[RMDB]
Chemical mapping of a 207-nucleotide RNA with 2A3 and DMS. The 2A3 profile rests on 3,257 reads. DMS adducts were read by reverse transcription with MarathonRT. For DMS, 4,943 sequencing reads were counted.
RNA sequence: GGGAACGACUCGAGUAGAGUCGAAAAUGGACGAGGGCAUGCCCAAGACACACCUUAACCCUGGCGGGGGUCGCUAGGGUGAAAUCACAUUAUGUGAUGGGGGUACGACCUGAUAGGGUGCUGCAGAGGCCCACUAGCAGGCUAGUAUAAAAAUCUCGAUUAUACGCUACUUCGGUAGCGUAUAAUCAAAAGAAACAACAACAACAAC
Reactivity to 2A3 in 0.01 (KOAc 150mM, MgCl2 10mM, bicine 150mM(pH8.5), 24C), signal-to-noise 5, nucleotides 027 to 156: u090g010g030a010c030g010a030g000g030g010c040a030u080g070c000c000c010a010a020g140a010c060a010c000a030c060c030u060u060a040a020c000c000c000u010g010g010c030g040g070g010g050g040u200c010g000c040u010a010g010g000g000u010g000a010a010a010u020c010a010c010a070u100u300a090u300g010u000g010a010u010g000g010g010g000g000u030a020c030g040a090c010c000u000g000a010u030a010g030g020g010u200g020c010u020g000c010a040g020a050g180g000c010c030c020a140c020u010a020g010c010a000g020g000c040u090a040g040u030a060u120a090a110a020a090a090u080c080u040c070
Reactivity to DMS in 0.01 (KOAc 150mM, MgCl2 10mM, bicine 150mM(pH8.5), 24C), signal-to-noise 2, nucleotides 027 to 156: u010g010g000a060c070g010a110g000g000g000c070a070u000g010c000c010c270a090a150g020a080c030a050c040a050c020c020u010u010a090a080c000c010c000u000g030g030c050g010g000g010g000g040u000c020g060c080u000a010g000g000g000u010g010a040a060a020u000c000a020c020a210u000u020a110u010g050u010g000a020u000g010g020g010g010g030u000a020c010g000a020c000c000u000g000a090u000a050g020g010g010u000g030c020u000g000c060a280g000a300g020g010c010c010c010a060c040u000a060g000c010a040g030g010c010u000a070g060u000a090u010a010a070a070a060a120u010c030u000c060